[RMDB]
RNA sequence: GGGAACGACUCGAGUAGAGUCGAAAACAAUGACUUUGCUGCUAGUGUUAGGCAAGUUGUAGUGUUAGCUGGUGUUAAGCUGUCUUACUAUGCCUUUGAAACACCGGCAGUUGCAUUGAAUGGUGUUUUGCAUGCUGUUAAGCGUUGCAGUGCAAAAUGCUGCCUGAUAUUUCGAUAUCAGGCAGCAAAAAGAAACAACAACAACAAC
Reactivity to 2A3 in 0.01 (KOAc 150mM, MgCl2 10mM, bicine 150mM(pH8.5), 24C), signal-to-noise 1, nucleotides 027 to 156: c000a000a000u060g220a230c010u200u070u230g000c000u000g000c000u040a090g000u000g040u100u060a000g000g000c040a000a250g030u040u040g010u200a010g000u090g000u120u070a010g000c000u000g020g040u140g260u300u100a080a000g020c000u000g020u110c010u060u060a010c000u000a090u020g010c010c000u000u080u260g070a000a040a000c030a000c010c010g000g120c000a000g030u050u110g000c000a000u000u000g150a110a130u100g100g000u050g090u030u060u050u000g000c000a000u060g050c030u000g000u070u160a060a010g060c030g090u010u080g000c020a000g120u010g050c000a020a000a000a000